Overview: An RNA of 207 nucleotides, treated with 2A3 and read out base by base. The RNA was probed in 150 mM KOAc, 10 mM MgCl2 and 150 mM bicine (pH 8.5) at 24 C.
RNA sequence: GGGAACGACUCGAGUAGAGUCGAAAAAGCUGCUUCUUCUUAUUCUCCAGAUCGCAUUUCCUUUUAUGUCGCUGCUUUUCUUCAGGCGUGAAGGAGAGGCCCUCGUAAUCCUUCUUCUUUUUCUUUUUGGGGCUCUCUCCAGUAUCCAUCGGCUCCGCAUAUCUCUAAACUUCGGUUUAGAGAUAUGAAAAGAAACAACAACAACAAC
Reactivity to 2A3 in 0.01 (KOAc 150mM, MgCl2 10mM, bicine 150mM(pH8.5), 24C), signal-to-noise 3, nucleotides 027 to 156: a000g010c020u050g010c010u050u040c000u080u020c020u100u100a100u200u060c050u040c040c030a080g030a210u080c020g000c050a050u040u030u130c040c000u120u090u100u130a100u190g090u090c030g020c090u050g030c000u120u060u100u120c040u070u070c090a040g050g000c020g040u020g080a070a070g010g000a010g000a000g000g000c010c000c010u070c050g120u080a100a170u080c030c000u050u130c040u110u100c030u150u300u090u100u180c050u090u240u110u140u200g030g020g000g010c090u090c000u000c000u000c100c000a000g000u010a050u040c010c000a040u050c020g060g000c000u010c030c030g010